Chemical mapping of a 207-nucleotide RNA with DMS and 2A3. The reactions ran in a buffer of 150 mM KOAc, 10 mM MgCl2 and 150 mM bicine (pH 8.5), at 24 C. 2A3 adducts were read by reverse transcription with SuperScript II with manganese.
RNA sequence: GGGAACGACUCGAGUAGAGUCGAAAAAGCCAUACCAUGACGAUGGUAUGGCAAGUCCGUGACGGCGAUGGAUCCCGCCUGGCCGAUGCCGAACUGCCGAUCUGGCUGAUGGUUCCUGCCCCGUCAAAAAACGUAAAGCACUUCGGUGCUUUACGAACCUAUAUACUACCUUCGGGUAGUAUAUAGGAAAAGAAACAACAACAACAAC
Reactivity to DMS in 0.01 (KOAc 150mM, MgCl2 10mM, bicine 150mM(pH8.5), 24C), signal-to-noise 1, nucleotides 027 to 156: a110g010c010c020a030u000a000c010c020a010u000g000a190c250g010a300u000g000g030u000a000u000g000g010c000a000a000g010u010c000c020g000u000g000a030c050g040g000c040g080a180u010g010g020a080u000c030c010c040g010c010c030u000g020g000c030c030g000a120u000g020c030c010g030a070a070c130u000g030c020c020g020a040u000c010u000g040g040c030u010g010a170u020g050g000u010u010c010c000u010g000c070c080c010c020g020u010c020a010a030a050a040a060a160c000g010u000a000a000a000g000c000a000c000u000u000c290g040g010u010g000c000u000u000u010a000c000g000a040a060
Reactivity to 2A3 in 0.01 (KOAc 150mM, MgCl2 10mM, bicine 150mM(pH8.5), 24C), signal-to-noise 5, nucleotides 027 to 156: a000g000c000c000a000u000a000c000c000a010u030g180a130c160g180a070u020g010g000u000a000u010g000g000c000a000a000g020u000c010c000g030u030g010a020c010g000g030c090g040a030u050g000g000a010u030c020c010c010g010c020c020u030g000g000c010c010g060a050u130g090c050c040g140a180a110c110u160g030c020c010g060a080u040c050u090g000g040c030u060g040a140u150g020g000u020u020c010c000u030g030c010c010c000c000g010u030c030a110a000a000a050a010a010c010g010u010a000a010a000g000c000a000c010u040u130c230g060g000u000g000c000u000u000u000a000c000g000a000a000
Annotation: Source: RMDB library M2RFPK, as collected in RNAgym. As a SHAPE reagent, 2A3 marks flexible, mostly unpaired nucleotides at the ribose 2'-OH.